[RMDB]
An RNA of 207 nucleotides, treated with DMS and read out base by base. The data come from the RNA Mapping Database (RMDB), library M2RFPK.
RNA sequence: GGGAACGACUCGAGUAGAGUCGAAAACCAUGAGACCGUAACUUUCGUGGUCAUUGAUAAAGGGGCAGGUCUCGCUCUUUUGUCAUUGCGGUUGCCUAGAGGCAUGGUCGUUUACCGCGACUUUCCAAUACGAAGAGGGCCUUCGGGCCCUCUUCAACACGAAUCUUAAGUUCGCUUAAGAUUCGUGAAAAGAAACAACAACAACAAC
Reactivity to DMS in 0.01 (KOAc 150mM, MgCl2 10mM, bicine 150mM(pH8.5), 24C), signal-to-noise 1, nucleotides 027 to 156: c000c020a000u000g020a050g030a030c010c030g030u010a170a140c070u000u000u000c110g020u000g000g030u000c090a150u000u000g000a030u000a020a010a030g010g030g030g030c000a140g020g000u030c060u000c060g030c000u000c000u000u000u000u010g010u000c010a080u000u070g010c030g040g060u000u000g010c010c040u020a120g020a170g050g050c180a070u010g000g030u000c020g010u000u000u010a120c190c200g000c010g020a060c010u000u010u000c020c020a080a230u000a100c120g010a060a020g010a000g020g010g000c020c010u010u020c300g030g020g000c000c000c030u000c000u000u000c020a040a110
The reactions ran in a buffer of 150 mM KOAc, 10 mM MgCl2 and 150 mM bicine (pH 8.5), at 24 C. The DMS profile rests on 2,604 reads.